Structure probing data (2A3) for a 177-nucleotide construct.
For 2A3 the reverse transcriptase was SuperScript II with manganese.
It was measured as part of the RMDB libraries RFM100 and RFMREP.
RNA sequence: GGGAACGACUCGAGUAGAGUCGAAAAACUAGGAGAAGUGAACGUUCUUUAAGAAUUUGUCAUUUCAAAUUUACGGAACCGCAAGAAACGAUUUGCUUCUUCCUCUAACUGAGUAAUUUCUUCUUCUCAAUGGAUGUCACUUCGGUGACAUCCAUUGAAAAGAAACAACAACAACAAC
Reactivity to 2A3 in 0.01 (KOAc 150mM, MgCl2 10mM, bicine 150mM(pH8.5), 24C), signal-to-noise 3, nucleotides 027 to 126: a000c010u010a010g000g010a000g000a000a000g000u000g030a020a000c000g020u010u000c000u020u150u070a120a060g020a010a010u000u000u010g120u120c170a230u020u240u140c010a020a010a010u050u040u080a050c060g020g090a140a180c060c040g090c170a030a000g000a070a080a000c040g270a300u000u010u000g000c000u000u010c000u050u020c020c000u000c010u030a100a180c060u050g050a020g100u120a110a150u050u150u020c040u030u000c000u040u000c010u000